This 207-nucleotide RNA was probed chemically with DMS and 2A3. Conditions: 150 mM KOAc, 10 mM MgCl2 and 150 mM bicine (pH 8.5), 24 C. For DMS the reverse transcriptase was MarathonRT.

RNA sequence: GGGAACGACUCGAGUAGAGUCGAAAAGAUCUGCGCCGAUCCGAAACGCUAGCAAACAGCCCGCAUCAUGUCGUCUCCUAACUUCGACGUGGUGAAAUACUGAUCUUAUGCGAGUAAGCCUGUUAGCAAUAGAUCAGAACGUUCGCGUUCUGAUCAACUUACACCGUUAGUUCGCUAACGGUGUAAGAAAAGAAACAACAACAACAAC
Reactivity to DMS in 0.01 (KOAc 150mM, MgCl2 10mM, bicine 150mM(pH8.5), 24C), signal-to-noise 2, nucleotides 027 to 156: g010a050u000c020u010g010c020g050c050c060g000a040u000c030c030g000a090a060a070c060g050c030u000a050g010c020a030a080a060c050a240g010c020c020c060g010c020a070u000c030a040u000g010u000c010g000u000c100u000c100c060u000a140a070c030u010u000c000g010a020c000g020u000g020g010u000g000a090a100a140u000a110c080u000g000a080u010c040u010u000a040u000g000c050g000a080g020u000a050a160g050c060c060u000g010u000u000a110g010c010a070a140u000a130g010a030u010c000a010g010a010a030c000g050u000u010c280g050c080g000u010u000c000u000g000a010u000c020a000a070
Reactivity to 2A3 in 0.01 (KOAc 150mM, MgCl2 10mM, bicine 150mM(pH8.5), 24C), signal-to-noise 6, nucleotides 027 to 156: g020a060u020c020u080g060c040g010c040c050g040a040u030c030c030g050a070a060a040c070g000c040u040a020g020c030a080a030a080c010a050g020c000c020c010g000c010a010u000c000a000u030g000u010c010g020u000c060u080c080c070u160a140a190c070u090u070c030g010a010c020g030u010g010g000u020g020a030a030a000u160a030c040u030g060a050u050c020u060u130a050u160g030c030g010a020g080u060a070a050g020c000c040u040g020u070u050a010g030c040a050a090u060a190g000a000u000c000a000g000a000a000c000g010u030u050c220g000c000g080u000u000c010u000g000a000u000c000a000a010